RNA sequence: GGGAACGACUCGAGUAGAGUCGAAAAAGCACGAUCCGUACCUAGCAUGGUCAUGCAUGAUGUCUCUGUACUACAUGACUAGGAUAUGUCAUGUGAUCAUCGAUCGUACGCUAGAUGCAGCUCACUCACUAGGGUAUGAGUUCGCUCAUACCCUAGUAAAAGAAACAACAACAACAAC
Reactivity to 2A3 in 0.01 (KOAc 150mM, MgCl2 10mM, bicine 150mM(pH8.5), 24C), signal-to-noise 6, nucleotides 027 to 126: a000g060c050a030c100g010a020u060c050c020g020u010a030c010c010u030a040g030c050a040u030g000g030u020c020a040u200g030c010a000u040g030a020u050g060u000c010u000c020u120g100u100a130c040u060a060c050a180u220g050a100c040u090a070g050g030a030u030a010u080g020u010c000a000u010g020u030g030a020u010c010a000u020c020g050a040u060c030g010u010a010c030g000c050u070a020g000a120u040g020c020a020g020c020u020c040a060c000u060c000
Reactivity to DMS in 0.01 (KOAc 150mM, MgCl2 10mM, bicine 150mM(pH8.5), 24C), signal-to-noise 8, nucleotides 027 to 126: a070g010c030a040c080g010a080u000c140c030g020u000a040c030c040u010a140g030c160a050u000g010g020u010c030a070u000g020c050a030u000g010a040u000g010u010c050u000c050u010g010u010a080c100u010a090c210a080u000g010a040c070u010a210g010g000a070u000a030u010g000u000c010a010u010g010u000g010a030u000c030a020u000c050g020a120u000c180g000u010a040c050g010c100u000a080g000a070u000g010c060a070g000c040u000c060a140c140u010c100
Background
This 177-nucleotide RNA was probed chemically with 2A3 and DMS. The reactions ran in a buffer of 150 mM KOAc, 10 mM MgCl2 and 150 mM bicine (pH 8.5), at 24 C. For DMS the reverse transcriptase was MarathonRT. The 2A3 profile rests on 11,646 reads. High 2A3 reactivity points to a flexible backbone, as in loops and unpaired stretches.